RNA sequence: GGGAACGACUCGAGUAGAGUCGAAAAAGAGACGAAGGAGGAUCUUUACCCAUCCAAUACUACUGGUCUUGCUCAACCAUAGAUAUAGAGAUUGUCAAAUUAUUAAUAAAGGAUGUGGACACGUGUAGCGUAUACGACGACAUCAGUCAGCCAUAUACAAUGAGAGGACAUUCGUGUCCUCUCAUUGAAAAGAAACAACAACAACAAC
Reactivity to DMS in 0.01 (KOAc 150mM, MgCl2 10mM, bicine 150mM(pH8.5), 24C), signal-to-noise 2, nucleotides 027 to 156: a100g000a100g010a060c070g090a080a110g010g020a160g000g010a040u000c030u000u000u000a160c010c030c020a170u000c020c000a060a060u000a050c020u000a070c050u010g000g010u010c030u000u010g050c090u000c020a060a040c010c000a060u000a020g000a130u000a100u000a100g000a050g030a100u000u000g010u000c010a060a110a080u000u000a140u000u000a090a140u010a070a070a110g020g010a100u000g000u000g040g000a060c060a050c050g060u000g020u010a100g010c020g000u010a050u010a070c060g010a000c040g010a060c010a100u000c080a090g000u010c000a080g030c000c010a060u000a090u010a090
Reactivity to 2A3 in 0.01 (KOAc 150mM, MgCl2 10mM, bicine 150mM(pH8.5), 24C), signal-to-noise 3, nucleotides 027 to 156: a010g030a010g010a010c070g030a140a020g040g040a030g000g030a040u030c000u020u040u120a110c020c010c000a020u050c010c020a070a050u060a120c030u010a020c090u030g000g000u030c000u030u080g000c020u040c080a060a040c020c000a040u050a040g040a040u080a020u060a110g060a030g020a080u060u090g050u080c010a030a040a060u170u190a040u110u100a160a090u100a130a120a020g040g000a060u050g040u100g100g010a020c010a010c070g060u070g080u080a030g050c020g010u060a020u020a120c040g020a000c030g000a000c010a030u020c020a050g030u000c000a020g000c000c000a050u090a010u010a160